RNA sequence: GGGAACGACUCGAGUAGAGUCGAAAAUAGAACGUGCGCUUGGAUGUGCGGGCGUGCCGGACGAUGUCGGAGACGGUGGUGGCGCGAUAACCCCGCUCACCGAUCGAGGCGACCAGGCCGUCGAGCAAAACACACACCAGUUCGCUGGUGUGUGUUUAAAAGAAACAACAACAACAAC
Reactivity to DMS in 0.01 (KOAc 150mM, MgCl2 10mM, bicine 150mM(pH8.5), 24C), signal-to-noise 3, nucleotides 027 to 126: u020a070g000a130a130c110g000u020g000c050g030c040u020u010g010g020a160u040g040u030g010c060g000g000g000c030g010u020g030c030c010g010g010a150c120g010a040u020g010u020c030g020g000a180g010a050c020g010g000u000g010g040u010g000g000c120g010c090g000a080u050a140a080c210c030c010c000g000c090u010c020a020c000c000g000a130u010c040g000a120g000g010c020g000a140c000c030a100g000g000c020c010g020u010c010g010a070g000c130a100
Reactivity to 2A3 in 0.01 (KOAc 150mM, MgCl2 10mM, bicine 150mM(pH8.5), 24C), signal-to-noise 3, nucleotides 027 to 126: u250a020g070a140a020c040g010u030g030c030g010c030u010u110g040g040a070u080g120u100g040c000g010g010g000c040g010u060g030c000c000g040g010a060c100g030a060u190g050u110c060g060g030a070g000a090c040g000g000u050g020g030u050g000g030c040g000c060g080a020u090a080a140c000c020c000c000g000c010u030c010a050c000c010g060a070u020c030g020a060g060g040c010g010a050c010c000a040g020g000c030c010g020u020c000g000a020g010c010a000
The record gives the reactivity of an RNA of 177 nucleotides to DMS and 2A3. 2A3 adducts were read by reverse transcription with SuperScript II with manganese. It was measured as part of the RMDB library OK1LIB. Reactivities are given for positions 27 through 126. The reactions ran in a buffer of 150 mM KOAc, 10 mM MgCl2 and 150 mM bicine (pH 8.5), at 24 C. The 2A3 profile rests on 2,800 reads. DMS adducts were read by reverse transcription with MarathonRT.